[RMDB]
An RNA of 207 nucleotides, treated with 2A3 and DMS and read out base by base. Source: RMDB library OK3TST, as collected in RNAgym. For DMS the reverse transcriptase was MarathonRT.
RNA sequence: GGGAACGACUCGAGUAGAGUCGAAAACUUGCCCAGGCCAGGGAGCGAGUGCCUGAGAUGGCAGUGAAAUCCUUCCCCAUUGAAGGAGAGCAGACAAGCCAGUGACGGAGGAUCCCAAAUAACUCACAUCUCGUUGGGAAAACUGCUUUGGGCUCACCGUUAAUGUAAUGUUCGCAUUACAUUAACGAAAAGAAACAACAACAACAAC
Reactivity to 2A3 in 0.01 (KOAc 150mM, MgCl2 10mM, bicine 150mM(pH8.5), 24C), signal-to-noise 4, nucleotides 027 to 156: c030u050u110g020c000c010c020a010g040g000c050c030a030g020g050g040a030g060c040g010a030g030u110g030c020c020u060g020a060g020a090u130g040g000c010a020g020u030g100a110a030a030u020c010c000u010u040c020c050c010c020a130u070u200g020a030a020g040g030a030g020a000g040c040a010g050a110c050a090a020g030c030c010a070g030u050g080a010c070g030g020a020g000g050a080u070c000c020c010a050a120a040u150a050a040c040u040c040a090c000a130u080c060u030c080g070u040u060g030g010g000a030a100a040a040c030u050g000c000u090u040u040g020g020g010c040u050c030a050c020
Reactivity to DMS in 0.01 (KOAc 150mM, MgCl2 10mM, bicine 150mM(pH8.5), 24C), signal-to-noise 4, nucleotides 027 to 156: c050u010u010g010c030c000c000a120g020g020c030c050a140g000g020g000a050g010c020g020a100g020u000g010c020c030u000g010a160g010a110u000g020g040c050a150g030u010g020a090a100a140u000c010c020u000u000c010c060c040c260a190u010u010g010a070a060g020g010a080g000a140g050c040a170g020a090c060a070a140g020c030c020a080g020u000g000a130c090g000g040a120g000g000a130u000c030c000c020a060a050a110u000a080a070c020u000c040a050c060a190u000c020u000c050g020u000u000g000g000g000a050a080a050a050c040u000g010c000u000u000u000g020g010g000c050u010c030a220c080